[RMDB]
RNA sequence: GGGAACGACUCGAGUAGAGUCGAAAACUCCGUGGACCGAGAAACUCUUACACAAGUAGCUGGCUUUGACAUGCACCGUGGCUUGUUGGCUUCUGCGGAUCGAGUACCAGGGAUGAGCAUUGCGCAAGAACCUUGAACGGUUCGCCGUUCAAGGUUCAAAAGAAACAACAACAACAAC
Reactivity to DMS in 0.01 (KOAc 150mM, MgCl2 10mM, bicine 150mM(pH8.5), 24C), signal-to-noise 2, nucleotides 027 to 126: c020u000c010c040g050u010g020g010a040c110c030g000a090g000a120a130a070c040u000c090u000u010a120c160a010c080a060a050g000u000a070g030c040u000g000g010c050u000u000u010g010a060c120a160u000g000c070a110c060c030g040u020g000g000c070u000u000g010u010u000g020g000c060u010u000c010u000g010c010g000g000a110u000c090g000a040g000u000a080c020c020a090g000g030g000a090u000g000a070g010c070a080u010u000g010c090g000c110a130a110
This 177-nucleotide RNA was probed chemically with DMS. Conditions: 150 mM KOAc, 10 mM MgCl2 and 150 mM bicine (pH 8.5), 24 C. For DMS the reverse transcriptase was MarathonRT. Reactivities are given for positions 27 through 126.